RNA sequence: GGGAACGACUCGAGUAGAGUCGAAAAUUCGGAUUUUUCUUAUUCAAAGGAAAGGAGAGGGCCUCUAAAAGGAUACCUAGGGUCCUCAACGUCUACGUCCACCCAAAUCUUUCAUUCUUGGGAGAAAACGGCGAAGGGAAUUCGUUCCCUUCGCCGUAAAAGAAACAACAACAACAAC
Reactivity to 2A3 in 0.01 (KOAc 150mM, MgCl2 10mM, bicine 150mM(pH8.5), 24C), signal-to-noise 1, nucleotides 027 to 126: u050u070c000g000g070a030u000u000u000u080u090c010u170u140a290u010u100c070a050a060a130g000g030a150a010a010g030g140a060g000a090g010g000g080c000c010u300c000u030a030a100a070a290g160g140a070u240a270c020c010u000a000g000g000g000u000c000c000u000c000a000a020c000g030u000c080u120a000c000g050u000c000c000a060c000c000c000a030a030a030u050c000u010u010u010c000a010u230u090c020u000u050g000g120g060a000g000a070a060a000

Notes:
Structure probing data (2A3) for a 177-nucleotide construct.